This 207-nucleotide RNA was probed chemically with 2A3 and DMS. The 2A3 profile rests on 6,983 reads. DMS adducts were read by reverse transcription with MarathonRT. Source: RMDB library OK3TST, as collected in RNAgym. The RNA was probed in 150 mM KOAc, 10 mM MgCl2 and 150 mM bicine (pH 8.5) at 24 C. 2A3 is a SHAPE reagent: it acylates the 2'-hydroxyl of flexible nucleotides of all four kinds. For 2A3 the reverse transcriptase was SuperScript II with manganese.

[RMDB]
RNA sequence: GGGAACGACUCGAGUAGAGUCGAAAAGAUGUUCUUUGGUCUGGGUACAUCGGGUGGCACAACAAUUACUAUGACGCAUCAUGGUGGUUGUGAACUCGUGGCUUGAUGCGUCAAGUUAUGAGUGUUCUAUGUUACUGUACCCAGAGUGAUAUAGAAACAUAUGGUACUACUUCGGUAGUACCAUAUGAAAAGAAACAACAACAACAAC
Reactivity to 2A3 in 0.01 (KOAc 150mM, MgCl2 10mM, bicine 150mM(pH8.5), 24C), signal-to-noise 7, nucleotides 027 to 156: g090a080u100g020u060u020c030u030u090u120g080g050u030c000u010g010g000g000u010a000c010a050u040c060g100g000g090u120g060g030c020a010c010a080a020c020a080a210u070u030a010c010u040a100u180g000a020c010g000c050a040u020c000a010u050g050g060u070g040g080u100u080g080u080g130a070a030c030u040c080g070u070g060g040c010u000u020g000a000u000g010c020g000u000c000a000a000g000u010u020a010u020g010a010g020u020g030u110u120c050u090a070u080g060u050u090a070c050u030g000u000a010c000c000c000a000g000a000g000u050g030a040u070a010u030a200g090a020a090a000
Reactivity to DMS in 0.01 (KOAc 150mM, MgCl2 10mM, bicine 150mM(pH8.5), 24C), signal-to-noise 4, nucleotides 027 to 156: g000a130u000g010u000u010c030u000u000u000g020g030u010c020u000g010g020g020u000a020c040a080u000c040g020g020g050u000g010g000c070a080c040a030a090c080a070a070u000u000a030c020u000a070u000g020a050c130g040c140a100u000c000a030u010g010g030u000g050g010u000u000g020u000g000a070a040c040u010c080g050u000g010g020c030u000u010g000a040u010g030c150g020u010c000a010a030g030u010u000a040u000g030a120g000u000g010u000u010c090u010a070u010g020u000u010a050c050u000g010u000a090c020c010c000a070g010a020g010u000g010a070u000a060u010a060g020a100a100a210